[RMDB]
RNA sequence: GGGAACGACUCGAGUAGAGUCGAAAAAGAGCAGAAAAAAGCUGUUACUGAUAAGAUGUCAGAAAUAAAAAGUAGUAUUGAAGAUAAGUGGAAUACAGUUGAAAAGUUUUUCAGUUCUAUAAAUUUACGUUCCAUCGGUAAAUCAAUCAUAGAAGGGAUUGCAUCCUGAUUUCGAUCAGGAUGCAAUAAAAGAAACAACAACAACAAC
Reactivity to 2A3 in 0.01 (KOAc 150mM, MgCl2 10mM, bicine 150mM(pH8.5), 24C), signal-to-noise 1, nucleotides 027 to 156: a000g060a000g000c000a000g140a020a130a000a030a100a130g070c050u030g080u160u050a150c030u020g060a050u080a060a190g020a060u080g050u070c010a000g110a060a170a000u150a020a100a020a020a000g100u160a010g000u020a130u020u180g050a000a000g000a040u100a080a040g030u000g100g000a020a020u150a060c050a050g000u030u000g020a020a040a050a050g030u060u000u000u000u180c080a000g010u010u000c060u000a080u060a080a090a040u170u070u040a000c000g030u100u130c030c030a060u100c030g050g040u060a000a000a050u010c020a020a020u090c080a000u010a040g140a060a020g080g010g020
The record gives the reactivity of an RNA of 207 nucleotides to 2A3. For 2A3 the reverse transcriptase was SuperScript II with manganese.